[RMDB]
RNA sequence: GGGAACGACUCGAGUAGAGUCGAAAAGACAGAGCACGAUCCAUGGUAUUUCACUUUGGACAUAGGUGCUUCUUAGGCCCUGGGGGGCAGCAGAGCCAAGCAGGGGACAGCCUCCACUUCAUUGGUUCCAGAGCCAGUGAGGUGCUGGCCUGCAUGACAUGCAGCUGGAUUUCGAUCCAGCUGCAUGAAAAGAAACAACAACAACAAC
Reactivity to 2A3 in 0.01 (KOAc 150mM, MgCl2 10mM, bicine 150mM(pH8.5), 24C), signal-to-noise 2, nucleotides 027 to 156: g040a000c070a010g080a000g010c030a000c020g090a080u010c000c010a010u010g000g040u080a140u100u300u180c070a030c020u030u010u020g010g000a020c010a050u190a100g180g000u010g000c000u040u040c000u000u060a060g060g030c000c000c000u040g000g000g000g000g010g000c000a000g000c000a010g010a010g010c000c000a060a020g000c030a030g040g010g000g030a050c040a040g210c010c010u020c010c000a010c000u000u000c000a000u000u000g000g020u070u030c080c110a140g010a000g210c000c000a000g000u000g000a010g000g000u030g000c000u010g010g020c000c000u000g010c010a120u130g050a020
Structure probing data (2A3) for a 207-nucleotide construct. The RNA was probed in 150 mM KOAc, 10 mM MgCl2 and 150 mM bicine (pH 8.5) at 24 C. The data come from the RNA Mapping Database (RMDB), library OK3TST.